[RMDB]
RNA sequence: GGGAACGACUCGAGUAGAGUCGAAAACGGCUUUCAGCCACAAACCUAGGCCCAGCUUUCUGAGAGCAUAUUAGGUGCCAGGUGCUGGGGAUGCUGCAGCGACCAGAGCUGACAGUUCAUCCCUCCUAGAGUUUCUAGUCUAGUGGAGGAAACAGUCCGUGGUAUCACAAUUCGUUGUGAUACCACGAAAAGAAACAACAACAACAAC
Reactivity to DMS in 0.01 (KOAc 150mM, MgCl2 10mM, bicine 150mM(pH8.5), 24C), signal-to-noise 1, nucleotides 027 to 156: c090g010g020c000u000u010u010c080a090g020c070c010a090c020a040a030a070c040c030u000a130g010g010c120c000c010a060g000c000u000u010u000c050u000g010a120g030a070g040c000a070u000a130u000u000a110g060g150u010g010c020c020a070g020g020u010g030c050u000g050g010g000g020a030u000g040c000u010g040c090a120g020c020g000a300c110c180a110g000a290g000c000u000g010a130c070a050g030u050u010c040a060u000c000c040c000u250c040c010u010a010g020a100g050u000u000u000c130u000a130g040u000c020u010a000g000u020g000g020a130g020g000a080a060a110c030a060g010u000c020
Reactivity to 2A3 in 0.01 (KOAc 150mM, MgCl2 10mM, bicine 150mM(pH8.5), 24C), signal-to-noise 3, nucleotides 027 to 156: c010g010g040c000u060u100u060c080a020g030c040c000a030c000a040a070a020c010c000u040a080g030g000c010c020c000a010g000c040u110u290u200c110u120g080a160g000a040g250c040a050u110a190u210u290a170g150g000u030g010c010c010a010g000g010u020g020c050u020g020g000g100g010a020u030g000c010u010g000c000a000g000c010g090a130c110c110a100g040a000g090c000u010g050a260c000a010g000u060u110c000a030u010c030c010c010u050c000c010u010a020g020a020g010u080u160u090c070u070a020g110u020c010u040a000g010u030g050g000a040g000g070a010a050a060c050a040g080u130c060
Notes: Chemical mapping of a 207-nucleotide RNA with DMS and 2A3. Conditions: 150 mM KOAc, 10 mM MgCl2 and 150 mM bicine (pH 8.5), 24 C. Reactivities are given for positions 27 through 156. The data come from the RNA Mapping Database (RMDB), library OK3TST. For DMS the reverse transcriptase was MarathonRT.